[RMDB]
RNA sequence: GGGAACGACUCGAGUAGAGUCGAAAAGAAAGAGAGUUAGACACGGUUGAUCUCACCCUUCAGGGGGGCUAUAGAGAUCACUGGAAGCACUACCGGACAACCGGAACAUUGCAGCAAUGCAGCCCAAAAAAUCCAAACAUCUUCGGAUGUUUGGAAAUCAUAGUACAAACUUCGGUUUGUACUAUGAAAAAGAAACAACAACAACAAC
Reactivity to DMS in 0.01 (KOAc 150mM, MgCl2 10mM, bicine 150mM(pH8.5), 24C), signal-to-noise 2, nucleotides 027 to 156: g000a110a050a150g020a140g010a130g020u000u000a040g030a170c060a140c020g000g020u010u030g010a030u020c000u010c000a300c000c000c000u000u010c090a300g020g040g030g020g010g020c070u000a100u030a110g020a040g000a040u000c010a020c030u000g010g000a090a150g030c060a060c030u000a090c010c010g000g000a090c240a110a180c040c000g020g010a100a120c110a110u010u000g000c000a110g010c100a050a050u000g000c050a060g020c010c000c010a010a030a100a070a090a140u000c000c000a030a010a000c000a000u000c000u010u000c300g010g000a010u000g010u000u000u000g000g000a000a000a030
Reactivity to 2A3 in 0.01 (KOAc 150mM, MgCl2 10mM, bicine 150mM(pH8.5), 24C), signal-to-noise 2, nucleotides 027 to 156: g040a000a090a000g140a010g030a000g020u100u090a040g040a080c030a010c120g000g020u120u160g010a010u010c000u010c010a060c000c020c010u050u130c140a090g100g010g000g000g010g000c030u100a080u100a290g000a000g000a000u010c000a000c010u010g000g030a010a060g000c030a020c020u060a020c020c010g010g040a080c060a170a190c060c010g010g020a040a000c010a030u040u210g000c000a000g010c010a010a080u030g010c020a000g010c020c000c000a050a070a040a020a000a010u010c000c010a000a000a010c000a000u000c000u020u030c090g100g010a000u000g000u000u010u020g000g000a000a000a020